[RMDB]
RNA sequence: GGGAACGACUCGAGUAGAGUCGAAAAGAUAUGGAUGAGCCUUUUGACGCUUGCGGUUCGGAAACGAACCGUAAAGCGAUAAGGCUAUCCUAAGUCAAAGCGGAAAUCACUUCGGUGAUUUCCGCAACAUAAUAACCUGCUUCGGCAGGUUAUUAUGAAAAGAAACAACAACAACAAC
Reactivity to 2A3 in 0.01 (KOAc 150mM, MgCl2 10mM, bicine 150mM(pH8.5), 24C), signal-to-noise 4, nucleotides 027 to 126: g010a030u070a030u110g030g010a020u120g270a050g010c000c020u050u070u070u170g300a180c150g000c010u010u000g010c000g000g000u000u010c020g000g010a030a060a040c000g000a000a010c010c000g000u010a020a000a010g000c000g000a000u020a010a000g000g000c000u000a000u000c000c000u010a100a020g030u020c080a180a070a020g000c010g000g020a000a000a000u000c000a000c030u090u150c300g130g000u000g000a000u000u000u020c000c000g000c000a000a010
Reactivity to DMS in 0.01 (KOAc 150mM, MgCl2 10mM, bicine 150mM(pH8.5), 24C), signal-to-noise 4, nucleotides 027 to 126: g000a020u010a200u010g000g000a010u000g000a020g010c000c000u000u000u000u000g010a130c090g020c010u000u000g000c000g000g000u000u000c000g010g000a060a040a110c000g010a010a000c000c000g020u000a010a010a010g020c000g020a050u000a000a010g000g000c000u000a020u000c000c000u000a020a110g000u000c020a080a110a130g010c000g000g000a010a010a010u000c010a000c000u000u020c220g040g000u000g000a000u000u000u000c000c000g010c010a010a020

The data come from the RNA Mapping Database (RMDB), library TTRDEL. Chemical mapping of a 177-nucleotide RNA with 2A3 and DMS. For 2A3, 9,956 sequencing reads were counted. The reactions ran in a buffer of 150 mM KOAc, 10 mM MgCl2 and 150 mM bicine (pH 8.5), at 24 C. Values cover nucleotides 27 to 126. 2A3 adducts were read by reverse transcription with SuperScript II with manganese. DMS (dimethyl sulfate) methylates the pairing face of unpaired adenines and cytosines. As a SHAPE reagent, 2A3 marks flexible, mostly unpaired nucleotides at the ribose 2'-OH.